Conditions: 150 mM KOAc, 10 mM MgCl2 and 150 mM bicine (pH 8.5), 24 C. Chemical mapping of a 177-nucleotide RNA with 2A3 and DMS. For 2A3, 1,442 sequencing reads were counted.
[RMDB]
RNA sequence: GGGAACGACUCGAGUAGAGUCGAAAAACUGCAAGGCAAGGCAAGUGGCACUUUCAGGGUUGACACCUGUCGUACAUCCAACAACUCUACAGUGGUUGCUAUCCAUCACAUGUGAACGAGCAGACCAUCCCCCUGAUAUGUUCGCAUAUCAGGGGGAAAAAGAAACAACAACAACAAC
Reactivity to 2A3 in 0.01 (KOAc 150mM, MgCl2 10mM, bicine 150mM(pH8.5), 24C), signal-to-noise 1, nucleotides 027 to 126: a000c020u050g000c000a000a060g090g000c020a040a000g030g000c030a070a000g040u020g000g000c020a000c020u000u120u100c070a040g000g040g060u010u050g030a000c000a020c010c020u040g030u020c010g030u030a030c000a050u040c090c010a010a020c000a060a030c060u040c010u130a050c040a070g010u020g050g090u030u040g020c030u070a040u180c020c010a030u090c020a080c010a090u080g000u040g050a060a070c070g030a040g000c020a000g000a120c050c010a050
Reactivity to DMS in 0.01 (KOAc 150mM, MgCl2 10mM, bicine 150mM(pH8.5), 24C), signal-to-noise 3, nucleotides 027 to 126: a180c080u000g040c050a060a090g000g000c100a100a060g000g040c040a040a010g030u020g020g010c030a040c020u000u000u020c200a110g020g010g000u000u000g020a100c090a100c060c020u000g000u010c090g000u000a050c100a060u010c070c040a010a120c090a080a110c010u010c020u010a030c120a110g010u000g010g010u000u000g000c040u000a110u020c040c050a080u010c060a100c190a100u010g030u010g030a060a080c110g030a180g010c020a030g000a080c050c010a160